[RMDB]
RNA sequence: GGGAACGACUCGAGUAGAGUCGAAAAGUGCAGAUUGAAAUUCAUAAGUGCGGCGCCAAUGUGGCGUAACGACCCGGUACUCCGCGCAGUCGAGCUGUAAACGUUCUGUGUUGGCGUUCGGGCCUCAUAGUAGAGCAUGUUUCGACAUGCUCUACUAAAAAGAAACAACAACAACAAC
Reactivity to DMS in 0.01 (KOAc 150mM, MgCl2 10mM, bicine 150mM(pH8.5), 24C), signal-to-noise 4, nucleotides 027 to 126: g020u010g020c000a020g000a150u020u010g000a050a110a070u030u040c100a050u030a070a080g000u000g000c030g010g000c110g000c000c000a170a120u040g020u030g000g020c010g010u010a030a080c120g000a110c000c010c020g020g010u050a080c040u020c010c030g010c000g000c030a060g020u010c030g000a060g030c120u030g000u020a030a070a150c030g010u020u010c020u000g030u000g020u000u000g030g000c240g000u010u000c060g000g000g000c150c000u030c080a190
Reactivity to 2A3 in 0.01 (KOAc 150mM, MgCl2 10mM, bicine 150mM(pH8.5), 24C), signal-to-noise 3, nucleotides 027 to 126: g050u060g000c030a040g100a160u130u090g080a180a180a070u190u100c070a040u120a300a000g040u040g090c000g050g010c000g020c020c000a060a150u250g090u280g070g000c020g000u000a020a020c050g060a050c000c010c000g000g000u050a000c000u000c000c000g000c000g000c000a000g020u050c000g010a010g000c120u100g150u300a050a120a010c050g040u160u000c020u000g020u000g030u130u300g030g000c040g010u000u020c000g000g000g000c000c000u040c000a030